Conditions: 150 mM KOAc, 10 mM MgCl2 and 150 mM bicine (pH 8.5), 24 C. The record gives the reactivity of an RNA of 177 nucleotides to DMS. Values cover nucleotides 27 to 126. High DMS reactivity at an A or C suggests that its Watson-Crick edge is free. For DMS the reverse transcriptase was MarathonRT.

[RMDB]
RNA sequence: GGGAACGACUCGAGUAGAGUCGAAAAAAUCAUAAAGACAUUUUCUAACGGGUGCGAUUAUGUAUCAAAUAAGGGGGUUGACACUGUGUCUGUAGGUAAUACAUUAUAUUAUGUAAAUAAGCAAGAAAACUCCGUACCAUUUCGAUGGUACGGAGUUAAAAGAAACAACAACAACAAC
Reactivity to DMS in 0.01 (KOAc 150mM, MgCl2 10mM, bicine 150mM(pH8.5), 24C), signal-to-noise 1, nucleotides 027 to 126: a180a010u040c020a000u060a010a110a060g010a030c000a020u020u000u000u000c020u000a140a090c210g000g010g030u000g000c020g000a190u000u040a080u090g020u020a090u070c060a030a090a040u020a080a060g010g000g000g020g040u020u000g000a060c080a100c120u020g020u010g000u000c000u000g010u010a060g030g010u020a030a110u020a010c040a020u000u020a080u020a100u100u000a020u010g000u020a000a020a060u050a060a050g010c100a050a140g020a100a080